[RMDB]
Record summary: Structure probing data (DMS) for a 177-nucleotide construct. The reactions ran in a buffer of 150 mM KOAc, 10 mM MgCl2 and 150 mM bicine (pH 8.5), at 24 C. DMS adducts were read by reverse transcription with MarathonRT. Source: RMDB library VIROID, as collected in RNAgym. For DMS, 1,320 sequencing reads were counted.
RNA sequence: GGGAACGACUCGAGUAGAGUCGAAAACCGAUCCGAGGGGUCCGUCCGCCAGAGUUGGGGAGCACUCCGGGCCGAAGGGUUGAGUAGUACCCAGAGGGUGGAAUCCACACGGAGGUAAGCAGACAAACAUUUAUAGACCGUUCGCGGUCUAUAAAUGAAAAGAAACAACAACAACAAC
Reactivity to DMS in 0.01 (KOAc 150mM, MgCl2 10mM, bicine 150mM(pH8.5), 24C), signal-to-noise 2, nucleotides 027 to 126: c000c020g000a110u010c020c030g000a140g050g000g000g000u010c060c080g010u000c000c000g020c070c080a190g000a070g000u000u000g000g020g000g000a140g020c300a040c010u020c030c300g010g000g010c020c020g000a160a110g010g000g020u000u000g010a110g030u010a040g010u000a240c000c000c030a020g010a170g000g000g030u010g000g000a100a110u020c030c000a050c030a170c040g000g000a030g020g000u000a060a100g000c110a080g010a110c180a100a050a130